[RMDB]
RNA sequence: GGGAACGACUCGAGUAGAGUCGAAAAACGCUUCACAAUGUGCGGCAAAGAAACAUUGUUUAUGCAGAGGCACUUCGCAAUGUGUGCUCAAACAUUGCUUAUUCAAACACGCUUCACAAUGUGCGACAAAACUUCACGGUCUUCGGACCGUGAAGAAGAUUUUCGCUUUCUUCGGAAAGCGAAAAUCAAAAGAAACAACAACAACAAC
Reactivity to 2A3 in 0.01 (KOAc 150mM, MgCl2 10mM, bicine 150mM(pH8.5), 24C), signal-to-noise 3, nucleotides 027 to 156: a000c000g000c010u030u030c020a010c000a010a030u030g000u010g010c000g070g030c090a070a050a150g100a010a070a000c010a010u020u000g080u050u050u100a160u130g060c030a000g020a070g130g000c010a010c030u040u020c060g040c020a030a010u020g000u000g030u020g060c110u100c140a050a050a000c010a010u010u010g000c000u090u130a150u130u100c080a030a080a030c040a020c060g050c010u110u100c030a000c030a120a130u190g040u030g040c010g030a060c070a050a050a040a020c000u000u000c000a000c000g000g000u010c000u010u050c110g120g010a000c000c000g000u000g000a000a000g000a000a000
Structure probing data (2A3) for a 207-nucleotide construct. Conditions: 150 mM KOAc, 10 mM MgCl2 and 150 mM bicine (pH 8.5), 24 C. Source: RMDB library M2RFPK, as collected in RNAgym.